Chemical mapping of a 177-nucleotide RNA with 2A3 and DMS.
Values cover nucleotides 27 to 126.
It was measured as part of the RMDB library OK1LIB.
For 2A3 the reverse transcriptase was SuperScript II with manganese.
The 2A3 profile rests on 5,929 reads.
High 2A3 reactivity points to a flexible backbone, as in loops and unpaired stretches.
Conditions: 150 mM KOAc, 10 mM MgCl2 and 150 mM bicine (pH 8.5), 24 C.
For DMS, 13,048 sequencing reads were counted.
For DMS the reverse transcriptase was MarathonRT.

[RMDB]
RNA sequence: GGGAACGACUCGAGUAGAGUCGAAAAAUGGACGAGAAGGCGACCCGGGCAUCCUUUUUUGUCAACGCGUAGUUGCUUCGCGGUGUCGCUACUUCUGUUCAGCCGGCAGAGGUAAGAGGGGAUGUGCACUGAUUAGUCGAUUCGUCGACUAAUCAGUAAAAGAAACAACAACAACAAC
Reactivity to 2A3 in 0.01 (KOAc 150mM, MgCl2 10mM, bicine 150mM(pH8.5), 24C), signal-to-noise 7, nucleotides 027 to 126: a000u160g030g020a030c060g040a030g030a140a040g090g020c030g000a020c020c010c000g000g020g010c020a060u090c030c020u080u130u060u020u080u190g230u180c050a050a030c020g010c020g120u160a070g050u100u120g050c050u100u120c040g030c020g050g030u100g010u010c010g000c040u020a050c000u010u000c000u020g020u010u100c040a010g020c030c000g010g000c030a000g010a040g080g010u090a090a020g050a080g060g020g000g010a020u030g050u070g050c050
Reactivity to DMS in 0.01 (KOAc 150mM, MgCl2 10mM, bicine 150mM(pH8.5), 24C), signal-to-noise 4, nucleotides 027 to 126: a050u030g000g020a020c040g020a030g020a050a060g000g010c040g010a070c010c010c020g000g000g020c040a020u000c040c020u020u010u010u020u010u000g020u020c020a030a100c080g020c090g020u020a090g020u000u000g000c050u010u010c010g020c000g000g010u020g000u000c020g000c050u010a030c000u000u000c010u010g010u000u010c030a080g010c070c040g000g030c030a020g000a050g000g000u010a020a130g010a090g000g010g000g000a070u010g010u010g030c120